[RMDB]
This 177-nucleotide RNA was probed chemically with DMS and 2A3. Values are in units of 0.01, from 0 to 300, in steps of 10.

RNA sequence: GGGAACGACUCGAGUAGAGUCGAAAAGGGGAGAAAAAUUCUUUAGAAAGCACCUUAUUGACUAUGAUGCAGCAUCAAAUAUUCAUGGAUGGCAAUGGUCUGCUUCUACAGGUACGGAUGCAGUGCCCGUGAUGCUACCAUUCGUGGUAGCAUCACGAAAAGAAACAACAACAACAAC
Reactivity to DMS in 0.01 (KOAc 150mM, MgCl2 10mM, bicine 150mM(pH8.5), 24C), signal-to-noise 2, nucleotides 027 to 126: g000g000g000g000a080g000a000a080a090a130a120u020u030c030u060u000u020a120g020a070a040a080g010c050a050c030c000u000u020a020u030u000g000a030c120u000a000u010g000a110u000g000c030a050g000c020a040u000c130a030a050a090u000a030u020u020c060a050u030g040g000a090u010g050g000c060a070a070u010g000g010u000c030u000g000c040u040u020c040u000a100c120a120g020g000u010a020c070g000g000a020u000g000c030a070g020u010g000c070c010
Reactivity to 2A3 in 0.01 (KOAc 150mM, MgCl2 10mM, bicine 150mM(pH8.5), 24C), signal-to-noise 5, nucleotides 027 to 126: g060g040g010g010a050g070a040a080a000a010a060u110u090c060u070u050u010a110g110a080a070a000g030c010a010c020c010u060u080a120u070u140g030a030c000u020a040u100g030a070u040g050c020a040g090c000a070u020c030a070a160a130u210a110u160u210c100a080u110g070g050a030u040g020g030c030a010a030u060g010g010u010c020u050g030c010u010u030c020u060a090c040a040g010g050u050a020c030g010g010a060u070g040c030a010g020u010g030c000c000